[RMDB]
RNA sequence: GGGAACGACUCGAGUAGAGUCGAAAAGGGGUCUCGUUCGAGGACUCCAGUAGGCUUGGAUUUAUGGAGCUGAAGCCUCCACGGCUCCAUUGUCAGCCUACGGAGUCCUAAGACAGACGAGACGGAGGCACCCAAAACGGUGAGUUCGCUCACCGAAUCCGUAUUUCAAGUUCGCUUGAAAUACGGAAAAAGAAACAACAACAACAAC
Reactivity to DMS in 0.01 (KOAc 150mM, MgCl2 10mM, bicine 150mM(pH8.5), 24C), signal-to-noise 2, nucleotides 027 to 156: g000g010g050g020u000c000u010c010g020u000u000c010g030a060g000g000a040c000u010c000c000a040g060u000a050g010g000c010u010u000g030g010a120u000u000u000a040u020g030g000a060g050c010u010g000a060a100g000c060c020u000c000c020a300c090g020g000c030u000c000c010a010u010u010g010u000c020a120g040c010c010u000a020c010g030g010a060g010u010c000c000u000a050a100g000a030c300a100g000a060c000g000a040g000a030c040g040g010a030g100g060c010a220c000c000c010a060a060a040a080c030g000g020u010g000a030g080u000u000c300g030c000u000c000a020c010c000g020a050a030
Reactivity to 2A3 in 0.01 (KOAc 150mM, MgCl2 10mM, bicine 150mM(pH8.5), 24C), signal-to-noise 4, nucleotides 027 to 156: g090g010g030g010u000c000u000c000g000u010u020c010g020a000g000g000a000c000u000c000c010a010g010u000a000g000g030c060u100u300g180g000a070u200u250u190a020u080g000g000a000g000c010u010g040a090a010g020c000c000u000c000c010a020c010g010g000c000u000c000c000a000u000u000g020u030c110a040g000c000c000u000a010c000g000g000a000g000u000c000c000u010a010a010g000a000c010a000g010a000c000g000a000g000a000c000g000g000a000g000g010c000a050c000c020c020a030a100a010a020c020g020g000u020g000a010g000u070u210c280g030c110u000c000a000c000c000g000a000a050
About this RNA: Structure probing data (DMS and 2A3) for a 207-nucleotide construct. It was measured as part of the RMDB library RNAMAK. For DMS, 2,999 sequencing reads were counted. 2A3 adducts were read by reverse transcription with SuperScript II with manganese.